[RMDB]
The data come from the RNA Mapping Database (RMDB), library OK3TST. Chemical mapping of a 207-nucleotide RNA with 2A3 and DMS.
RNA sequence: GGGAACGACUCGAGUAGAGUCGAAAAAUUAAUGUUGUUAAAUCUGACCUAUGAUGACGCCUUGUUAGACAGUAAAAGCUUAUUGAAUUACAUAUUUUAUGCUUUUUGGAAAUGUGACCAAUGUGUAAUGGAUACUGUUAACAACAAAUUGAAUAAAUAUAUGACGAUGAUUCGUCAUCGUCAUAUAAAAAGAAACAACAACAACAAC
Reactivity to 2A3 in 0.01 (KOAc 150mM, MgCl2 10mM, bicine 150mM(pH8.5), 24C), signal-to-noise 2, nucleotides 027 to 156: a010u120u140a050a050u080g000u030u000g000u020u060a120a090a060u050c040u050g070a100c020c090u040a090u150g010a030u050g020a030c070g040c020c080u000u000g000u040u010a150g050a140c010a010g020u070a000a090a000a050g030c030u120u070a090u100u210g010a010a010u040u030a020c000a010u090a110u010u090u060u080a120u150g000c010u050u040u060u060u140g030g070a080a140a090u110g030u050g040a000c000c060a050a030u030g000u000g000u040a060a060u030g020g000a000u010a110c000u000g000u000u010a000a010c050a030a010c000a000a070a070u090u100g030a010a060u040a190a080a010
Reactivity to DMS in 0.01 (KOAc 150mM, MgCl2 10mM, bicine 150mM(pH8.5), 24C), signal-to-noise 2, nucleotides 027 to 156: a130u020u010a120a070u020g020u000u010g010u010u000a090a110a150u000c060u030g010a170c110c020u010a090u020g020a160u000g020a040c030g000c050c070u010u000g000u000u000a070g060a070c000a060g010u000a020a030a110a240g010c050u000u000a060u000u000g000a150a080u000u000a030c010a020u000a040u030u000u010u000a060u020g010c070u000u000u000u000u000g030g030a020a080a050u020g000u000g000a020c090c000a040a010u010g020u020g020u010a030a100u010g030g000a280u000a060c030u000g000u000u000a040a040c030a030a060c020a020a010a140u000u020g020a080a030u000a070a040a200

The DMS profile rests on 2,868 reads. Values cover nucleotides 27 to 156. For DMS the reverse transcriptase was MarathonRT.